[RMDB]
RNA sequence: GGGAACGACUCGAGUAGAGUCGAAAAAGGAAGAAGCCGCCGCGUACCGCAAGCAGUUCGGCCAACGCGAAAUCAUGGUGAUCUGGCCGGACUGGCUCGGCUGGGACGACACGACGAACUCGACGGCCGUCAUCCCGGCGCCGGCGAUCGCCGCCGGGCACUGCACAAAGUUCGCUUUGUGCAGUGCAAAAGAAACAACAACAACAAC
Reactivity to 2A3 in 0.01 (KOAc 150mM, MgCl2 10mM, bicine 150mM(pH8.5), 24C), signal-to-noise 1, nucleotides 027 to 156: a000g120g000a080a040g090a080a000g050c020c040g000c030c050g000c050g010u060a160c000c020g010c070a000a030g020c010a000g010u000u010c000g010g000c010c000a210a160c060g030c030g170a180a110a020u300c180a200u210g090g000u020g000a220u060c050u040g020g000c000c000g000g000a000c000u000g000g030c000u010c060g070g070c050u040g000g000g050a020c030g000a030c000a020c150g060a000c000g010a090a140c000u060c000g030a030c080g080g050c130c020g000u020c010a080u050c020c000c020g060g000c050g000c000c000g000g000c010g000a030u090c140g080c110c010g000c000c000g000g010

This 207-nucleotide RNA was probed chemically with 2A3. The RNA was probed in 150 mM KOAc, 10 mM MgCl2 and 150 mM bicine (pH 8.5) at 24 C. The 2A3 profile rests on 539 reads. Source: RMDB library OK3TST, as collected in RNAgym.